[RMDB]
The record gives the reactivity of an RNA of 207 nucleotides to 2A3 and DMS. Values are in units of 0.01, from 0 to 300, in steps of 10. The DMS profile rests on 7,294 reads.
RNA sequence: GGGAACGACUCGAGUAGAGUCGAAAACAAACCAGUGGUCAGUGAUGAACAGCUAUCUCGCUGGCUGGGCACCAACUCCCCACUAGACUUGGAAGAGCGGCGCAAGCUCAUGAUGGCCGUGGUGCUAGUUACUGUGGAAAUGGAGUGUCUUCGCCGCAUGCCUAAUAGUUUUCGAACUAUUAGGCAUAAAAGAAACAACAACAACAAC
Reactivity to 2A3 in 0.01 (KOAc 150mM, MgCl2 10mM, bicine 150mM(pH8.5), 24C), signal-to-noise 5, nucleotides 027 to 156: c050a000a050a040c010c010a030g020u040g050g080u050c010a010g010u020g080a180u110g040a130a100c080a090g080c050u140a100u100c050u020c080g040c040u010g020g000c010u020g010g020g000c010a030c050c000a070a140c040u090c010c020c030c000a010c020u070a060g030a070c030u020u060g050g030a150a080g030a070g030c000g020g000c010g000c050a030a010g000c020u010c050a030u130g040a080u080g070g010c030c020g030u020g000g010u050g030c020u020a020g050u110u060a030c000u040g010u020g050g060a000a050a110u160g020g020a050g020u060g050u010c020u050u040c020g010c010c000g000c010
Reactivity to DMS in 0.01 (KOAc 150mM, MgCl2 10mM, bicine 150mM(pH8.5), 24C), signal-to-noise 3, nucleotides 027 to 156: c030a090a130a110c040c020a150g040u000g020g020u000c020a050g040u010g030a050u000g020a070a070c050a120g010c070u000a060u000c070u010c070g040c090u010g030g010c010u030g010g010g010c050a050c020c020a070a080c070u000c020c030c010c010a120c050u000a110g010a090c020u020u000g010g010a120a110g010a130g030c000g020g000c000g060c140a100a250g020c040u000c020a050u010g010a190u000g000g040c030c020g030u000g010g050u000g020c010u000a120g040u000u000a020c020u000g010u010g010g000a060a080a080u000g010g000a100g030u000g010u000c020u000u000c020g030c010c030g000c120